[RMDB]
RNA sequence: GGGAACGACUCGAGUAGAGUCGAAAAGAAGAUGAUGUGUUGGAUAGGUGGGAGGCUUUGAAGUGUGGACGCCAGUCUGCAUGGAGCCGACCUUGAAAUACCACCCUUUAAUGAAAAACAAAUACAAGUAGGACUAUUGGUUCGCCAAUAGUCCUACAAAAGAAACAACAACAACAAC
Reactivity to DMS in 0.01 (KOAc 150mM, MgCl2 10mM, bicine 150mM(pH8.5), 24C), signal-to-noise 2, nucleotides 027 to 126: g010a090a010g000a070u000g040a040u000g000u010g000u000u010g000g020a110u000a020g000g020u000g000g000g010a300g010g020c010u000u000u010g000a150a110g000u000g000u000g000g010a000c000g020c300c210a100g000u000c010u000g020c020a030u000g000g000a050g030c030c000g000a040c040c030u000u000g000a080a030a050u010a060c040c030a030c060c010c100u000u000u000a040a080u000g000a010a120a060a090a050c150a120a080a100u030a100c190a070a100

The record gives the reactivity of an RNA of 177 nucleotides to DMS. Conditions: 150 mM KOAc, 10 mM MgCl2 and 150 mM bicine (pH 8.5), 24 C. DMS adducts were read by reverse transcription with MarathonRT.